Chemical mapping of a 177-nucleotide RNA with DMS and 2A3.
2A3 is a SHAPE reagent: it acylates the 2'-hydroxyl of flexible nucleotides of all four kinds.
Source: RMDB libraries RFM100 and RFMREP, as collected in RNAgym.
The reactions ran in a buffer of 150 mM KOAc, 10 mM MgCl2 and 150 mM bicine (pH 8.5), at 24 C.
[RMDB]
RNA sequence: GGGAACGACUCGAGUAGAGUCGAAAAACACGCCCACUUGCAAUGGCCAUUAUGUUUUUGGGCUAUAAAGUGCAGCUCUGACAAAAGCGUUUGCUUAAAGCUGAAAGAGCAGUGGAGUUUAGUGCAAUUAGGAGGAAUUUUUCGAAAUUCCUCCUAAAAAAGAAACAACAACAACAAC
Reactivity to DMS in 0.01 (KOAc 150mM, MgCl2 10mM, bicine 150mM(pH8.5), 24C), signal-to-noise 9, nucleotides 027 to 126: a100c090a080c130g000c020c010c000a040c070u010u030g000c020a090a040u010g010g010c010c000a050u020u020a060u020g020u010u010u010u010u020g020g010g010c000u000a040u020a050a090a040g030u010g000c040a170g000c000u000c000u000g010a300c090a060a080a050a020g010c010g030u020u020u040g020c030u000u010a050a060a090g000c080u020g000a050a220a030g000a020g020c010a070g010u000g000g000a080g010u000u000u030a080g020u010g010c080a040a120
Reactivity to 2A3 in 0.01 (KOAc 150mM, MgCl2 10mM, bicine 150mM(pH8.5), 24C), signal-to-noise 6, nucleotides 027 to 126: a000c030a000c010g060c000c000c000a010c010u010u080g000c010a030a100u030g010g030c010c010a040u150u070a120u220g190u050u050u050u090u120g050g010g000c000u000a010u040a070a130a040g130u110g020c010a000g000c000u020c030u040g050a040c040a030a120a000a000g040c040g090u160u240u220g020c030u110u130a110a040a000g020c020u010g050a050a030a010g030a010g000c040a010g010u030g020g010a160g020u090u170u170a050g010u060g020c040a060a090